RNA sequence: GGGAACGACUCGAGUAGAGUCGAAAACCCCUCCGGUUCCCUUUCCCAUCGGAUCUGAACUCUGGUCUUGGUGGUCGUAAAAGGAGGAAAAGUAAUGCUGAAGCUGGCCUCACGGCGCUUGUAGUCUAUUAUCUGUGUCCUUCGGGACACAGAUAAUAAAAGAAACAACAACAACAAC
Reactivity to 2A3 in 0.01 (KOAc 150mM, MgCl2 10mM, bicine 150mM(pH8.5), 24C), signal-to-noise 3, nucleotides 027 to 126: c000c000c010c000u010c010c010g030g000u020u020c020c020c000u030u040u040c010c000c010a030u050c020g010g010a030u010c010u010g170a100a100c050u070c050u200g020g000u030c030u020u060g000g000u040g000g040u030c030g040u080a070a050a020a000g060g010a020g000g000a020a080a060a000g070u050a110a090u210g000c030u090g070a060a020g030c040u110g040g010c030c010u050c010a060c130g010g000c030g020c020u000u040g070u020a030g040u050c050u020
Reactivity to DMS in 0.01 (KOAc 150mM, MgCl2 10mM, bicine 150mM(pH8.5), 24C), signal-to-noise 2, nucleotides 027 to 126: c020c030c010c010u000c000c020g050g040u000u000c020c010c000u000u020u010c040c010c000a080u020c090g000g010a040u030c010u020g000a120a130c180u020c070u010g000g000u010c020u000u000g020g050u000g000g040u010c140g020u030a020a040a060a050g000g050a030g010g020a060a090a080a100g010u000a070a060u010g000c020u000g000a100a080g010c030u020g040g030c020c000u000c070a100c080g020g030c070g000c060u000u000g020u030a060g010u000c090u010
The record gives the reactivity of an RNA of 177 nucleotides to 2A3 and DMS. Reactivities are rounded to 0.1 and cut off at 0 and 3.